[RMDB]
RNA sequence: GGGAACGACUCGAGUAGAGUCGAAAAGAUUAGGCAGAUAACAACUAUUAGGCGUCUUGCCACUGUAUUGUAAAGUAAACAACAAGAUAUAAGUUUAAUACACCUACGCGACAAGAUGAAUCAGCAACUCAACGGUUGUAUUCGUACAACCGUUGAGAAAAGAAACAACAACAACAAC
Reactivity to DMS in 0.01 (KOAc 150mM, MgCl2 10mM, bicine 150mM(pH8.5), 24C), signal-to-noise 1, nucleotides 027 to 126: g010a130u010u000a070g010g000c000a020g010a160u010a050a150c040a040a070c080u020a030u020u010a050g010g010c030g000u000c040u000u000g000c020c050a070c000u020g000u000a040u000u020g000u010a040a030a120g000u000a020a010a050c070a040a110c140a080a120g010a090u000a080u000a090a040g010u010u000u010a040a020u000a030c040a010c170c100u010a040c090g040c090g000a010c060a040a040g000a090u000g000a080a060u000c060a040g000c070a040a130
Reactivity to 2A3 in 0.01 (KOAc 150mM, MgCl2 10mM, bicine 150mM(pH8.5), 24C), signal-to-noise 1, nucleotides 027 to 126: g090a040u110u160a040g020g030c050a030g040a110u120a140a000c020a020a010c040u090a070u260u050a150g060g030c070g000u000c010u020u060g000c000c030a010c030u060g010u000a060u030u030g080u070a090a070a070g040u070a050a080a020c040a030a000c030a000a080g030a060u080a000u040a150a100g010u000u070u050a040a030u000a010c010a020c020c020u030a010c020g000c010g000a020c000a010a010g020a030u070g050a030a080u130c010a020g010c040a050a140